The data come from the RNA Mapping Database (RMDB), library OK2TRN. Structure probing data (2A3 and DMS) for a 177-nucleotide construct. DMS (dimethyl sulfate) methylates the pairing face of unpaired adenines and cytosines. For DMS the reverse transcriptase was MarathonRT. Conditions: 150 mM KOAc, 10 mM MgCl2 and 150 mM bicine (pH 8.5), 24 C.
RNA sequence: GGGAACGACUCGAGUAGAGUCGAAAAUACAGGCCGAUCCACGAUCAGAGGCCAGGCGCCUGAUCGUACGAGAGGAUCUGCGCCGGAUCGUACUCAGUAGCAUACGUACUAUAGGCCCAUGCUCUGCCUGUUCCCCCAGUUUCGACUGGGGGAACAGAAAAGAAACAACAACAACAAC
Reactivity to 2A3 in 0.01 (KOAc 150mM, MgCl2 10mM, bicine 150mM(pH8.5), 24C), signal-to-noise 2, nucleotides 027 to 126: u080a020c040a030g010g000c020c010g000a030u010c020c050a000c000g000a010u000c010a010g100a070g130g060c050c000a020g150g000c100g000c030c010u000g010a000u000c010g030u080a040c080g130a080g020a060g190g130a020u040c000u060g050c030g000c080c000g050g000a060u070c010g000u000a020c000u010c160a090g040u120a030g100c070a060u100a130c070g050u020a040c040u060a070u050a100g070g000c010c000c000a020u090g030c050u020c010u070g000c000
Reactivity to DMS in 0.01 (KOAc 150mM, MgCl2 10mM, bicine 150mM(pH8.5), 24C), signal-to-noise 2, nucleotides 027 to 126: u000a070c060a090g010g040c060c030g000a110u000c020c030a070c040g000a010u000c010a060g000a120g020g040c070c040a100g010g040c110g000c110c050u040g000a040u000c000g000u000a130c300g010a130g000a200g020g000a020u000c000u000g020c130g040c040c010g010g010a060u020c130g000u020a060c080u020c050a030g030u000a020g040c010a100u010a110c150g000u010a080c110u010a110u010a100g000g010c020c050c020a080u000g010c040u000c050u000g000c270